[RMDB]
RNA sequence: GGGAACGACUCGAGUAGAGUCGAAAACGCGAUCGCCGCGCGCCGGCUGCUCACGCGCCGCGCCGCUCGUUCUGACGGCGCGUCCACGCGUGCGCCUGCUCGUCGCGCACGAUCUGCUCGGCGGCGAACUGAUUUAAUGAUUCGUCAUUAAAUCAGUAAAAGAAACAACAACAACAAC
Reactivity to 2A3 in 0.01 (KOAc 150mM, MgCl2 10mM, bicine 150mM(pH8.5), 24C), signal-to-noise 8, nucleotides 027 to 126: c050g000c020g020a020u010c010g070c190c070g000c020g000c000g010c010c000g010g010c020u020g010c010u010c010a000c000g010c010g040c030c000g010c010g010c020c000g040c160u010c010g190u300u120c140u290g010a020c000g000g000c000g000c000g020u020c030c020a020c010g000c000g010u000g000c000g000c000c050u060g020c050u050c050g030u000c000g010c000g000c000a000c000g000a010u000c020u030g020c030u040c040g100g000c040g050g010c040g040a050
Reactivity to DMS in 0.01 (KOAc 150mM, MgCl2 10mM, bicine 150mM(pH8.5), 24C), signal-to-noise 9, nucleotides 027 to 126: c120g020c050g000a020u000c010g020c160c110g020c000g010c000g010c090c040g000g010c010u000g000c010u000c020a010c010g010c000g000c170c010g000c010g010c000c010g010c170u000c020g010u010u010c150u020g010a040c000g000g000c000g000c000g000u010c030c300a050c010g000c000g020u000g000c110g000c020c130u000g010c020u010c020g010u000c010g010c010g010c000a080c010g000a020u000c010u010g030c010u000c050g010g010c050g000g000c040g010a120